[RMDB]
RNA sequence: GGGAACGACUCGAGUAGAGUCGAAAAAGGGUUUUCCAAGCUGACUUUUAAUCAUGGGAAAGAAAUUACCCACAUGGAGUCAGCAGAAAAUGAAAAAGUGGGCCUCGUGCUGAGAUAAUUCCAGCAAAUACAAAGUAAUGUUCGCAUUACUUUGUAUAAAAGAAACAACAACAACAAC
Reactivity to DMS in 0.01 (KOAc 150mM, MgCl2 10mM, bicine 150mM(pH8.5), 24C), signal-to-noise 9, nucleotides 027 to 126: a080g000g010g010u000u000u000u000c000c060a130a120g010c000u000g000a010c000u000u000u010u020a070a110u020c180a140u010g010g000g000a180a070a080g000a090a070a100u010u010a150c020c000c000a030c300a100u010g000g000a000g000u000c010a000g030c000a080g000a020a020a040a030u010g000a080a060a070a080a070g010u010g000g000g000c050c010u000c090g010u020g010c020u000g010a090g010a070u020a080a140u020u010c030c010a040g000c050a090a090
Reactivity to 2A3 in 0.01 (KOAc 150mM, MgCl2 10mM, bicine 150mM(pH8.5), 24C), signal-to-noise 9, nucleotides 027 to 126: a000g050g010g010u000u010u020u030c010c020a050a030g000c000u000g000a000c000u030u040u100u280a130a080u160c070a060u050g010g000g030a040a090a070g120a020a240a050u110u110a170c000c010c000a020c020a060u110g020g000a010g000u000c000a000g000c000a000g000a000a040a010a020u180g070a080a060a030a010a020g080u080g010g040g020c020c010u050c040g080u060g000c010u040g020a070g020a190u160a170a090u230u030c020c000a000g000c000a060a080